[RMDB]
RNA sequence: GGGAACGACUCGAGUAGAGUCGAAAAGGCCUGUAUAUGACCAACUGCAACGAGUUCCUCGAAGGGAUGGUCGGCGCGUACCAGGCGCGGGUCGCCCCGUUCAACAUCAACUAUCGCUACGUUGCUGAGUCGCGUGCGAGUUCGCUCGCACGCGACUAAAAGAAACAACAACAACAAC
Reactivity to 2A3 in 0.01 (KOAc 150mM, MgCl2 10mM, bicine 150mM(pH8.5), 24C), signal-to-noise 1, nucleotides 027 to 126: g030g100c070c000u070g190u090a110u040a000u230g090a050c000c000a030a000c050u070g000c070a050a050c000g020a000g000u010u000c000c000u030c030g030a090a100g110g000g000a080u070g000g050u000c000g030g000c010g000c050g040u000a010c000c000a010g000g200c000g000c000g000g000g050u000c000g000c000c000c000c000g040u100u080c040a070a190c020a120u080c000a030a300c050u060a030u300c040g000c000u200a090c050g070u040u080g020c090u090g010
The data come from the RNA Mapping Database (RMDB), library OK1LIB. An RNA of 177 nucleotides, treated with 2A3 and read out base by base. 2A3 adducts were read by reverse transcription with SuperScript II with manganese. Reactivities are given for positions 27 through 126.